[RMDB]
This 177-nucleotide RNA was probed chemically with 2A3. Conditions: 150 mM KOAc, 10 mM MgCl2 and 150 mM bicine (pH 8.5), 24 C. 2A3 adducts were read by reverse transcription with SuperScript II with manganese. Source: RMDB library OK1LIB, as collected in RNAgym.
RNA sequence: GGGAACGACUCGAGUAGAGUCGAAAAAAAACAUAGUACAAAACGGCCACUUUUGGACAUGCCAAUAUUGACCGCCUUCGGGGCCAUCGGCACAUCAUAUGUUGUCUUCUGUACAUCAAAUGCCCUGGCUUCACUUCGGUUUCGACCGAAGUGAAGCAAAAGAAACAACAACAACAAC
Reactivity to 2A3 in 0.01 (KOAc 150mM, MgCl2 10mM, bicine 150mM(pH8.5), 24C), signal-to-noise 1, nucleotides 027 to 126: a000a000a020a000c150a040u180a110g030u060a000c040a000a010a000a090c020g000g010c000c020a000c040u070u110u070u020g130g000a090c060a110u000g000c000c020a000a150u090a080u130u170g030a130c010c000g000c000c000u120u050c000g200g000g000g000c000c000a020u030c050g010g010c000a020c000a000u030c040a000u030a110u200g010u000u050g000u020c080u080u020c040u030g030u000a000c000a030u100c040a030a110a070u120g030c000c000c000u000g190